[RMDB]
RNA sequence: GGGAACGACUCGAGUAGAGUCGAAAAUCGAUGGCGUUCGCGCCAUCGAAGAGCCGUACCGCGUAGGACGCGGAUAGGAGUGAAGAUAUCCAAGGCCAUGGAGGAGGCGUGCUUUCGAGCACGCCAACCUAGGUCAUGACUUCGGUCAUGACCUAGGAAAAGAAACAACAACAACAAC
Reactivity to DMS in 0.01 (KOAc 150mM, MgCl2 10mM, bicine 150mM(pH8.5), 24C), signal-to-noise 3, nucleotides 027 to 126: u000c000g000a000u000g000g020c010g020u000u010c260g040c000g030c000c000a010u000c010g020a000a030g000a120g010c000c030g010u010a180c010c030g000c010g010u000a090g030g020a300c020g010c090g000g010a070u000a060g000g000a100g000u010g000a100a070g000a130u020a080u000c100c020a090a120g020g000c030c020a100u000g000g010a090g020g000a210g030g010c000g010u000g020c000u000u000u000c160g010a020g020c020a000c010g000c010c000a020a020
Reactivity to 2A3 in 0.01 (KOAc 150mM, MgCl2 10mM, bicine 150mM(pH8.5), 24C), signal-to-noise 2, nucleotides 027 to 126: u010c000g010a000u010g000g010c030g000u010u060c270g010c020g000c060c000a000u000c000g000a000a000g000a000g030c000c000g050u090a090c000c000g010c010g040u050a120g170g240a090c000g000c020g010g000a030u150a030g030g020a010g030u100g130a100a050g030a110u110a050u100c000c020a030a030g070g000c010c010a050u070g020g050a060g040g040a050g000g020c000g020u000g000c000u000u040u150c160g030a000g000c000a000c000g020c020c000a000a000